Background: Chemical mapping of a 177-nucleotide RNA with DMS and 2A3. High DMS reactivity at an A or C suggests that its Watson-Crick edge is free. DMS adducts were read by reverse transcription with MarathonRT.
[RMDB]
RNA sequence: GGGAACGACUCGAGUAGAGUCGAAAACAGAGGUCGUGCUGGUCAACUCCAAUCCGGCGACGAUCAUGACGGACCCGGAGAUGGCCGACGAAGUCUACAUCGAGCCGAUCACGACCGAGGCCAUCGCAUUUACGACGACUUUCGAGUCGUCGUAAAUAAAAGAAACAACAACAACAAC
Reactivity to DMS in 0.01 (KOAc 150mM, MgCl2 10mM, bicine 150mM(pH8.5), 24C), signal-to-noise 6, nucleotides 027 to 126: c070a090g000a200g010g020u010c020g010u010g000c050u000g000g000u020c130a090a130c120u010c140c200a100a120u010c020c000g000g000c010g000a090c050g000a060u000c020a030u040g000a100c100g000g020a120c060c040c020g000g010a270g000a020u000g000g000c020c020g000a210c230g000a140a110g000u010c040u000a190c300a040u000c020g020a130g010c170c080g000a050u020c110a090c170g010a070c020c010g000a140g000g000c010c000a040u000c030g010c170
Reactivity to 2A3 in 0.01 (KOAc 150mM, MgCl2 10mM, bicine 150mM(pH8.5), 24C), signal-to-noise 6, nucleotides 027 to 126: c050a030g090a040g100g020u010c030g010u040g020c030u030g010g030u050c070a110a070c100u030c090c060a060a110u020c020c020g010g010c030g060a040c020g010a050u070c050a050u120g060a040c060g020g030a040c010c020c030g000g010a150g010a020u010g010g000c010c010g070a190c010g040a100a020g010u010c010u040a060c060a070u020c020g080a060g140c080c100g070a040u050c020a020c080g000a010c000c000g000a020g010g000c000c000a010u010c020g010c060